[RMDB]
RNA sequence: GGGAACGACUCGAGUAGAGUCGAAAAACAACACUUUAUCGCAUUAAGCUUGGGACUCAUGCUCAUUUCAUCAACUACAUGGUAAUAAAUGAGAGAGAGAUGAUUGAGAAAGUCAAAUCCAGUGAUCACGUACUCGUCCGUUCGCGGACGAGUACGUAAAAGAAACAACAACAACAAC
Reactivity to 2A3 in 0.01 (KOAc 150mM, MgCl2 10mM, bicine 150mM(pH8.5), 24C), signal-to-noise 2, nucleotides 027 to 126: a000c060a050a060c030a010c060u280u110u180a100u270c100g000c040a090u170u170a100a000g060c040u060u230g020g050g000a010c000u030c080a010u290g010c000u000c000a000u070u110u000c070a070u000c000a080a110c000u020a000c010a020u020g240g030u190a160a060u090a170a270a040u210g130a240g020a000g020a060g010a000g000a070u000g000a000u000u000g000a000g070a020a010a000g050u020c090a120a120a100u050c000c000a000g000u000g240a100u170c100

An RNA of 177 nucleotides, treated with 2A3 and read out base by base. The reactions ran in a buffer of 150 mM KOAc, 10 mM MgCl2 and 150 mM bicine (pH 8.5), at 24 C. Reactivities are rounded to 0.1 and cut off at 0 and 3. Source: RMDB library OK1LIB, as collected in RNAgym.